An RNA of 207 nucleotides, treated with DMS and 2A3 and read out base by base. The RNA was probed in 150 mM KOAc, 10 mM MgCl2 and 150 mM bicine (pH 8.5) at 24 C. For 2A3 the reverse transcriptase was SuperScript II with manganese. The 2A3 profile rests on 1,030 reads. The DMS profile rests on 4,331 reads.

[RMDB]
RNA sequence: GGGAACGACUCGAGUAGAGUCGAAAAAAGUCCAUAUGCCCACCUUCGCUGUUACGGGUGGAUGCUUAUACAUGCUAUGGAUGCCUACAUUUGAAAUAAUGUAGAUGCCUAAUACUCUCUCUCAGGGAGAGAGUUUAGAUGCCUCCAAAGUAAAUGCUACUAAUUAGGGGUUCGCCCCUAAUUAGUAAAAAGAAACAACAACAACAAC
Reactivity to DMS in 0.01 (KOAc 150mM, MgCl2 10mM, bicine 150mM(pH8.5), 24C), signal-to-noise 2, nucleotides 027 to 156: a050a060g010u010c010c010a020u000a060u000g000c030c000c010a050c020c000u000u000c100g020c000u000g040u010u020a120c090g000g000g030u000g000g000a050u000g010c060u010u000a100u000a070c060a090u010g010c020u010a140u000g000g030a030u000g040c030c010u000a020c010a010u010u000u000g020a130a070a100u000a010a030u000g010u000a020g020a190u000g020c080c000u000a020a040u010a020c000u000c000u010c010u010c000u000c130a300g030g020g000a020g010a020g010a000g020u010u000u000a000g010a110u000g020c010c020u000c010c020a050a110a080g020u000a040a070a080u000g010c080
Reactivity to 2A3 in 0.01 (KOAc 150mM, MgCl2 10mM, bicine 150mM(pH8.5), 24C), signal-to-noise 2, nucleotides 027 to 156: a000a000g090u030c030c000a000u060a030u160g040c000c000c000a010c010c010u040u060c110g110c230u160g040u180u060a010c030g020g020g000u000g010g010a050u090g030c020u110u070a050u030a130c050a110u090g010c000u070a030u040g000g000a030u000g000c010c000u020a000c000a020u000u010u020g120a120a110a040u120a030a040u030g000u010a010g020a050u120g060c010c000u030a060a030u140a140c000u030c000u000c000u010c000u020c150a150g010g300g000a000g000a000g000a010g000u000u010u000a000g000a000u050g000c000c030u040c020c030a020a120a030g010u010a070a190a080u110g030c020